Conditions: 150 mM KOAc, 10 mM MgCl2 and 150 mM bicine (pH 8.5), 24 C. This 177-nucleotide RNA was probed chemically with DMS.
[RMDB]
RNA sequence: GGGAACGACUCGAGUAGAGUCGAAAAGAAAAGCGAGUAAAAAGUCCUCAAAAUCGCAGAGGACGUCGCACUCGCAAAAGCUACGCGACGGAGAUAGCGAAAAUCUCGAAUAAGUAGCAAAAAAAAACACAGUGUCUAAGUUCGCUUAGACACUGUGAAAAGAAACAACAACAACAAC
Reactivity to DMS in 0.01 (KOAc 150mM, MgCl2 10mM, bicine 150mM(pH8.5), 24C), signal-to-noise 1, nucleotides 027 to 126: g000a140a150a140a190g010c010g020a010g000u020a060a060a080a150a140g020u000c000c010u020c000a040a040a050a100u020c030g020c050a140g020a020g010g020a010c020g000u000c000g030c130a010c020u000c000g040c010a070a020a120a120g010c000u000a010c000g000c010g020a030c050g000g030a020g010a020u000a020g050c030g000a020a050a060a040u010c000u000c000g010a030a050u010a040a110g000u000a020g010c010a000a000a000a000a020a070a040a100a060